[RMDB]
This 177-nucleotide RNA was probed chemically with DMS. For DMS, 827 sequencing reads were counted. The RNA was probed in 150 mM KOAc, 10 mM MgCl2 and 150 mM bicine (pH 8.5) at 24 C. For DMS the reverse transcriptase was MarathonRT. The data come from the RNA Mapping Database (RMDB), library OK2TRN.

RNA sequence: GGGAACGACUCGAGUAGAGUCGAAAACUAUUUCACACAAUUGAGUGGGCCUUUGCAGGGAGUGAUUUUAUUCAGGAAGGCAUAGGUGGCAACUCCUAAGUCGAGCACAAAGUUGCCUGGAACUCAACGUAAGGGCAACUUUCGAGUUGCCCUUACGAAAAGAAACAACAACAACAAC
Reactivity to DMS in 0.01 (KOAc 150mM, MgCl2 10mM, bicine 150mM(pH8.5), 24C), signal-to-noise 1, nucleotides 027 to 126: c090u010a050u000u000u020c070a070c100a130c140a160a160u080u010g000a030g060u000g000g000g070c010c060u000u000u000g000c040a070g000g030g030a240g080u010g020a030u000u010u000u020a040u010u000c110a030g000g000a110a060g000g000c020a070u000a000g010g040u010g030g020c050a070a070c010u000c040c020u000a100a140g000u000c050g000a090g030c160a080c160a070a080a030g020u000u010g030c020c020u020g010g000a090a100c020u000c060a070a160